[RMDB]
RNA sequence: GGGAACGACUCGAGUAGAGUCGAAAACAGUGAUGAGGCAAUCCAAAGAAGGGACUCUCACCUCAGAUGAUAUCCUAAUGGCAAUAGAUGAGGUAAUAGACUCAGUGAAUAGCAUGAGCUCUUGCUACGUCAUUUGUUCGUUCGCGAACAAAUGACGAAAAGAAACAACAACAACAAC
Reactivity to DMS in 0.01 (KOAc 150mM, MgCl2 10mM, bicine 150mM(pH8.5), 24C), signal-to-noise 1, nucleotides 027 to 126: c200a070g000u000g000a090u020g010a080g010g000c050a180a140u000c050c010a050a070a140g010a180a150g000g000g000a040c050u000c050u000c020a070c070c000u060c030a090g000a080u000g000a220u010a070u000c000c020u000a110a110u010g000g000c080a040a080u000a000g000a140u010g000a020g010g010u000a030a050u000a010g000a070c070u000c020a090g000u010g040a090a050u010a050g000c020a050u010g000a050g050c050u000c070u000u000g030c000u010a100
Reactivity to 2A3 in 0.01 (KOAc 150mM, MgCl2 10mM, bicine 150mM(pH8.5), 24C), signal-to-noise 1, nucleotides 027 to 126: c040a000g080u020g040a070u110g020a050g090g000c120a030a030u000c000c020a110a040a190g210a030a110g140g000g010a040c000u000c010u000c040a040c000c000u020c010a110g050a100u080g010a020u120a030u030c000c000u040a120a050u090g030g000c020a060a050u020a080g140a100u130g020a030g020g020u040a100a050u100a070g120a040c000u010c040a000g050u010g170a130a160u120a090g030c070a100u050g060a060g090c050u000c000u060u070g000c010u040a050